The record gives the reactivity of an RNA of 177 nucleotides to 2A3 and DMS. The RNA was probed in 150 mM KOAc, 10 mM MgCl2 and 150 mM bicine (pH 8.5) at 24 C. For DMS, 1,297 sequencing reads were counted.

RNA sequence: GGGAACGACUCGAGUAGAGUCGAAAAGCCACUUACGGACACUCCGUGUGACGUACAGUCUCACUCGCAUGACUAGUCAAAGUCAUGACUGUGAGCGAGUACGACUGAUGGUCACUUCGAGUGUGGACGUAGGGCGAUACUUCGGUAUCGCCCUACGAAAAGAAACAACAACAACAAC
Reactivity to 2A3 in 0.01 (KOAc 150mM, MgCl2 10mM, bicine 150mM(pH8.5), 24C), signal-to-noise 3, nucleotides 027 to 126: g040c010c000a030c050u120u140a040c030g070g020a000c020a000c030u000c010c060g090u060g010u000g030a000c030g040u190a030c030a010g000u000c010u050c030a010c010u000c000g020c010a080u160g040a140c040u100a030g030u040c030a100a080a000g290u180c050a140u080g010a010c010u030g010u000g070a020g020c020g000a000g010u010a010c060g000a000c010u010g010a060u140g030g000u000c000a000c000u050u050c060g040a070g030u010g000u020g040g000a010
Reactivity to DMS in 0.01 (KOAc 150mM, MgCl2 10mM, bicine 150mM(pH8.5), 24C), signal-to-noise 1, nucleotides 027 to 126: g010c000c040a140c210u000u010a080c050g040g000a100c020a010c010u000c010c050g000u000g020u000g000a010c000g000u000a030c000a020g010u000c000u020c190a080c000u000c000g000c010a060u000g000a110c050u000a010g020u000c060a050a130a170g010u000c210a100u000g000a000c030u000g000u010g000a070g020c000g030a000g010u000a060c180g000a020c010u000g020a010u000g010g010u000c000a000c000u010u000c180g010a080g010u000g010u000g020g000a160